The record gives the reactivity of an RNA of 207 nucleotides to 2A3. The reactions ran in a buffer of 150 mM KOAc, 10 mM MgCl2 and 150 mM bicine (pH 8.5), at 24 C.
[RMDB]
RNA sequence: GGGAACGACUCGAGUAGAGUCGAAAAUUGAGGAACAACUUGGUCGUACAGUCGCACAAGUGAUGAGUGAAGGAGGUCUUUAUGCCCCUCGCCUCGCUGCGCUUGCGGUCAAACAAGCACAGGGGGAUACAGUUGAGGCCGCUUUCCUCCUACGUGCGAACUCGUCAAGAUUCGUCUUGACGAGUUCAAAAGAAACAACAACAACAAC
Reactivity to 2A3 in 0.01 (KOAc 150mM, MgCl2 10mM, bicine 150mM(pH8.5), 24C), signal-to-noise 2, nucleotides 027 to 156: u100u080g010a030g050g070a100a080c040a010a040c160u020u060g030g010u060c010g020u020a100c070a170g060u090c040g050c000a050c040a170a140g030u020g100a140u040g020a110g040u060g030a150a020g060g110a210g000g030u060c060u060u270u100a210u300g000c060c000c000c010u000c000g000c000c000u000c000g020c000u010g000c010g000c020u000u020g000c000g060g000u130c020a010a030a000c040a020a000g010c000a000c020a030g030g020g000g000g000a010u080a050c120a020g050u070u120g110a030g090g130c050c030g040c040u050u050u010c000c000u030c000c000u010a020c100g000u010g020c040
For 2A3, 776 sequencing reads were counted.